Notes: This 177-nucleotide RNA was probed chemically with DMS and 2A3.
[RMDB]
RNA sequence: GGGAACGACUCGAGUAGAGUCGAAAAGAUAUGGACCCGAAGAACAUACUGAAUUUAUACUACCCACCACGCUCUUCGGAAACGAAGAGCGUGAGGUAUAUUAGUCAGUAUGGGAGGGUCCUAAGUCGUAUAAACAGGACUUCGGUCCUGUUUAUACAAAAGAAACAACAACAACAAC
Reactivity to DMS in 0.01 (KOAc 150mM, MgCl2 10mM, bicine 150mM(pH8.5), 24C), signal-to-noise 2, nucleotides 027 to 126: g010a100u010a300u000g000g000a020c000c000c000g000a050a260g000a180a220c000a010u000a000c000u000g010a040a040u010u000u000a020u010a010c230u000a030c010c010c110a300c150c000a000c000g000c000u000c010u000u000c000g000g000a070a110a220c000g010a010a000g010a020g000c000g000u000g000a000g010g000u000a020u000a020u000u010a040g000u000c000a010g010u000a000u000g000g030g000a120g030g000g000u010c000c010u000a000a030g010u020c100
Reactivity to 2A3 in 0.01 (KOAc 150mM, MgCl2 10mM, bicine 150mM(pH8.5), 24C), signal-to-noise 1, nucleotides 027 to 126: g090a000u180a030u280g000g000a020c060c040c020g070a210a050g030a060a020c000a010u020a000c000u030g060a210a140u060u180u030a050u000a040c150u020a040c020c020c070a110c040c010a010c050g050c000u000c000u030u000c000g000g000a090a060a030c030g000a000a000g020a000g000c010g010u000g000a000g000g000u000a000u000a000u010u050a050g080u000c000a000g010u020a020u000g000g040g010a030g020g000g000u000c000c010u020a010a000g020u020c050
The DMS profile rests on 1,869 reads. For 2A3, 2,208 sequencing reads were counted. The data come from the RNA Mapping Database (RMDB), library TTRINS.